[RMDB]
RNA sequence: GGGAACGACUCGAGUAGAGUCGAAAACAAAGCUCAGAACUGCCAUUGUGUGUGCCAUUAAUGUUAGACGUCAUUGUCCUUUACAUGUGAGCCCUUUCUUUCCUUGGUACCAUGUAAGUAAGUUAGCCUACCUAACUAUCUUCGGAUAGUUAGGUAGAAAAGAAACAACAACAACAAC
Reactivity to 2A3 in 0.01 (KOAc 150mM, MgCl2 10mM, bicine 150mM(pH8.5), 24C), signal-to-noise 9, nucleotides 027 to 126: c010a000a090a010g030c020u060c080a040g030a120a040c030u040g020c020c010a090u100u040g030u010g000u000g000u030g040c020c010a080u090u130a140a060u120g040u060u070a040g010a030c030g030u060c060a070u020u150g030u060c010c010u070u120u080a060c040a060u070g040u040g070a040g020c000c010c010u070u130u050c040u020u090u030c020c000u020u040g030g000u020a070c000c010a020u050g010u050a030a050g020u010a070a050g030u050u080a020g010c000
Reactivity to DMS in 0.01 (KOAc 150mM, MgCl2 10mM, bicine 150mM(pH8.5), 24C), signal-to-noise 9, nucleotides 027 to 126: c090a090a110a130g010c060u000c070a080g010a090a090c090u000g010c030c030a070u000u010g020u000g010u000g020u000g010c050c040a080u000u000a050a060u000g010u010u010a060g010a050c040g010u000c150a070u010u010g010u000c030c060u000u000u000a040c070a030u010g010u000g010a130g000c030c020c050u000u010u000c080u000u000u000c020c020u000u000g010g010u000a100c050c020a040u000g010u000a040a090g010u000a050a080g010u000u000a100g010c160
Chemical mapping of a 177-nucleotide RNA with 2A3 and DMS. Source: RMDB library OK2TRN, as collected in RNAgym. The reactions ran in a buffer of 150 mM KOAc, 10 mM MgCl2 and 150 mM bicine (pH 8.5), at 24 C.